Structure probing data (DMS and 2A3) for a 207-nucleotide construct. It was measured as part of the RMDB library RSTRND. For DMS, 5,161 sequencing reads were counted. Values cover nucleotides 27 to 156. Conditions: 150 mM KOAc, 10 mM MgCl2 and 150 mM bicine (pH 8.5), 24 C. DMS adducts were read by reverse transcription with MarathonRT. Reactivities are rounded to 0.1 and cut off at 0 and 3.
RNA sequence: GGGAACGACUCGAGUAGAGUCGAAAAUUUGCUGAAGCCUUGAAGAGCAGUAGUCAUCCUUACUGCUAGUUCAACUUAUUGUUGAGCAACAUUGCCAAAUUGCGGGAAAGUCUUAAUGACUUCGCUACCAAGUUCAAUAGCGUACUCUGAAUGGCCGCUCCAUAGAGUAGUUCGCUACUCUAUGGAGAAAAGAAACAACAACAACAAC
Reactivity to DMS in 0.01 (KOAc 150mM, MgCl2 10mM, bicine 150mM(pH8.5), 24C), signal-to-noise 2, nucleotides 027 to 156: u000u000u000g020c050u000g020a080a090g020c030c030u000u000g010a140a160g010a100g020c020a060g050u000a010g010u000c100a080u000c160c050u010u000a050c030u000g000c000u000a090g020u000u000c020a040a030c000u020u000a120u000u020g000u010u000g000a030g020c020a070a120c050a050u000u010g000c030c030a050a100a110u000u000g010c050g010g020g030a070a060a020g010u010c020u010u000a090a130u010g010a050c010u000u000c000g010c030u000a070c040c040a040a070g000u000u000c080a060a090u000a040g020c010g010u000a070c040u000c030u000g000a040a090u010g000g040c020c070g010
Reactivity to 2A3 in 0.01 (KOAc 150mM, MgCl2 10mM, bicine 150mM(pH8.5), 24C), signal-to-noise 6, nucleotides 027 to 156: u030u020u060g030c010u070g030a110a070g010c010c030u090u070g060a080a040g050a010g080c010a010g010u020a010g040u090c080a100u110c090c000u040u060a010c000u010g000c010u030a030g030u010u020c000a020a010c020u120u180a100u200u300g010u000u000g000a000g010c000a020a070c030a080u020u140g010c010c000a040a060a110u100u080g020c050g000g040g010a150a030a010g010u010c020u130u210a180a100u140g000a010c000u040u030c040g000c010u020a050c020c040a120a060g040u070u140c040a080a070u060a080g040c020g020u030a030c030u000c030u080g040a110a070u040g020g010c000c010g010